Notes
The record gives the reactivity of an RNA of 177 nucleotides to 2A3 and DMS.
[RMDB]
RNA sequence: GGGAACGACUCGAGUAGAGUCGAAAAGCCGGGACGGCCGGUGGAUGCGACAUGGAAAGCUUCAUGCAGGACGCGCGACAGGUCGUUGACGUCCUUUACCAGCCAGUUGUGCUUGGUGCAGGGGCGAACCUCCCACCUCAUUCGUGAGGUGGGAGGUAAAAGAAACAACAACAACAAC
Reactivity to 2A3 in 0.01 (KOAc 150mM, MgCl2 10mM, bicine 150mM(pH8.5), 24C), signal-to-noise 1, nucleotides 027 to 126: g000c010c040g000g080g040a180c090g060g000c020c020g050g040u010g000g010a040u060g000c040g040a040c020a050u090g030g010a190a100a070g050c060u060u110c050a130u100g050c000a010g130g020a020c070g000c050g000c020g020a020c040a080g030g080u080c020g000u030u060g000a020c020g000u000c010c000u000u000u020a030c000c000a000g040c000c000a130g060u160u120g080u250g050c050u110u170g000g000u000g000c030a020g000g000g000g000c000g000a010
Reactivity to DMS in 0.01 (KOAc 150mM, MgCl2 10mM, bicine 150mM(pH8.5), 24C), signal-to-noise 1, nucleotides 027 to 126: g020c010c020g030g020g020a050c100g010g010c020c030g000g090u000g000g010a080u010g000c020g020a170c070a050u010g000g040a110a170a130g010c120u000u010c010a080u000g000c010a040g000g010a050c050g020c060g010c020g000a060c010a080g000g010u010c030g040u000u000g010a120c010g000u000c000c000u010u000u000a020c000c020a040g000c000c010a300g010u020u000g030u020g050c010u000u000g020g010u000g000c160a030g010g000g000g000c010g000a060

Conditions: 150 mM KOAc, 10 mM MgCl2 and 150 mM bicine (pH 8.5), 24 C.